The record gives the reactivity of an RNA of 207 nucleotides to 2A3 and DMS.
Reactivities are rounded to 0.1 and cut off at 0 and 3.
2A3 adducts were read by reverse transcription with SuperScript II with manganese.
Reactivities are given for positions 27 through 156.
The RNA was probed in 150 mM KOAc, 10 mM MgCl2 and 150 mM bicine (pH 8.5) at 24 C.

RNA sequence: GGGAACGACUCGAGUAGAGUCGAAAAGGAAAUCAUUCAAUAAGUUAUCGAUGAAUUUCUCCAGAUAAUCCGCAUCGGCGUUGUAGGAGAUAACGGCAUACUGUUCAUAGUUCGCUUCGAUCCCUGUAACGGUCAGACGGUGCGCAGAACGGAAAAGGACACAAGAUGUUUUCGAACAUCUUGUGUCAAAAGAAACAACAACAACAAC
Reactivity to 2A3 in 0.01 (KOAc 150mM, MgCl2 10mM, bicine 150mM(pH8.5), 24C), signal-to-noise 4, nucleotides 027 to 156: g030g000a020a020a020u030c030a040u200u050c080a050a150u260a300a050g100u180u160a170u210c090g020a020u030g020a090a200u050u050u010c070u000c010c030a060g010a130u110a140a080u110c040c000g000c020a010u000c010g270g000c010g030u000u000g020u010a010g010g070a160g010a120u040a060a070c060g000g000c010a030u060a180c000u040g110u280u190c020a050u100a210g010u000u060c160g010c000u030u130c060g030a030u010c010c000c000u000g000u010a010a000c020g020g030u070c020a000g050a040c010g000g000u030g000c030g000c030a070g030a160a010c060g090g000a040a050a070a070g130
Reactivity to DMS in 0.01 (KOAc 150mM, MgCl2 10mM, bicine 150mM(pH8.5), 24C), signal-to-noise 2, nucleotides 027 to 156: g010g020a020a040a070u000c030a060u000u010c060a100a130u000a060a210g000u010u010a040u010c030g010a060u000g010a060a060u000u000u000c000u000c010c050a250g000a120u010a100a110u000c050c000g060c020a050u000c000g010g000c040g010u000u020g010u000a090g000g000a110g030a040u000a040a060c080g010g010c060a110u000a060c050u000g000u000u000c180a110u010a070g020u000u000c090g020c030u010u010c120g000a110u000c030c010c010u000g000u000a050a080c040g050g000u000c140a170g030a100c010g030g030u000g000c020g000c050a090g020a070a140c060g020g000a070a100a130a230g010